[RMDB]
RNA sequence: GGGAACGACUCGAGUAGAGUCGAAAAGGCACUGCCUGCACAUCAUUGUGCACCAGUUCACCAAGGUCAGGGCUCUGGCCUCCCCUUCAGGACUCGCUUCCCCUUGGCAGUGGCCAUGCCCAGGCAGGGAGGGUGCCCAGGCUCUGUGGUCCCCUGCCGGGCAAGGACAUUUCGAUGUCCUUGCCCGAAAAGAAACAACAACAACAAC
Reactivity to DMS in 0.01 (KOAc 150mM, MgCl2 10mM, bicine 150mM(pH8.5), 24C), signal-to-noise 2, nucleotides 027 to 156: g010g040c050a100c000u000g000c060c030u000g080c000a010c000a100u010c250a230u000u010g020u000g000c000a090c080c030a040g020u010u000c040a090c090c000a150a080g000g000u000c020a030g010g000g010c090u000c080u000g010g010c010c010u000c000c040c000c000u010u010c020a160g010g020a090c020u000c080g000c070u010u020c090c000c050c060u000u010g020g010c000a070g020u000g010g000c030c030a090u010g020c020c010c010a090g010g010c050a050g010g000g010a160g010g050g020u010g010c010c020c010a080g030g000c090u000c060u000g020u000g020g010u000c020c010c000c010u000g000c100
Reactivity to 2A3 in 0.01 (KOAc 150mM, MgCl2 10mM, bicine 150mM(pH8.5), 24C), signal-to-noise 4, nucleotides 027 to 156: g020g010c030a000c030u010g000c000c030u030g050c010a010c000a050u260c090a140u180u200g010u010g010c000a020c000c010a020g020u040u070c090a040c110c030a080a020g050g060u050c020a030g010g040g010c070u060c030u280g050g030c000c000u070c000c010c000c000u070u150c080a050g000g020a020c020u050c180g080c120u100u050c010c010c010c010u010u020g010g000c010a040g010u070g100g020c030c010a040u050g010c020c000c000a000g010g000c010a010g030g000g010a100g030g040g030u030g010c000c000c010a010g060g000c040u000c060u070g090u080g040g030u070c000c010c010c020u020g010c000
About this RNA
Source: RMDB library OK3TST, as collected in RNAgym. Chemical mapping of a 207-nucleotide RNA with DMS and 2A3. 2A3 is a SHAPE reagent: it acylates the 2'-hydroxyl of flexible nucleotides of all four kinds. For 2A3 the reverse transcriptase was SuperScript II with manganese.